[RMDB]
RNA sequence: GGGAACGACUCGAGUAGAGUCGAAAAGAUAUGGAUCUCUCCUAAGGACAACAGCAUCGCUCGGAAACGAGCGAUGACAUGUCCAAAGGAGAGGAUCCUAAGUCAAAGAAACCCUUCGGGGUUUCAACUACUGUACGCUCUUCGGAGCGUACAGUAGAAAAGAAACAACAACAACAAC
Reactivity to DMS in 0.01 (KOAc 150mM, MgCl2 10mM, bicine 150mM(pH8.5), 24C), signal-to-noise 1, nucleotides 027 to 126: g040a030u000a300u030g010g010a000u000c000u010c000u000c000c000u060a040a300g030g000a030c000a030a100c300a200g020c000a030u000c030g000c010u000c000g000g010a080a110a180c000g000a000g070c000g000a000u000g000a030c060a130u000g010u000c000c000a000a300a060g000g000a010g010a010g000g000a000u000c000c000u000a100a130g000u000c030a090a150a250g000a000a000a010c000c000c000u000u010c160g120g000g000g000u000u000u000c020a120a300
The data come from the RNA Mapping Database (RMDB), library TTRDES. This 177-nucleotide RNA was probed chemically with DMS. Values cover nucleotides 27 to 126.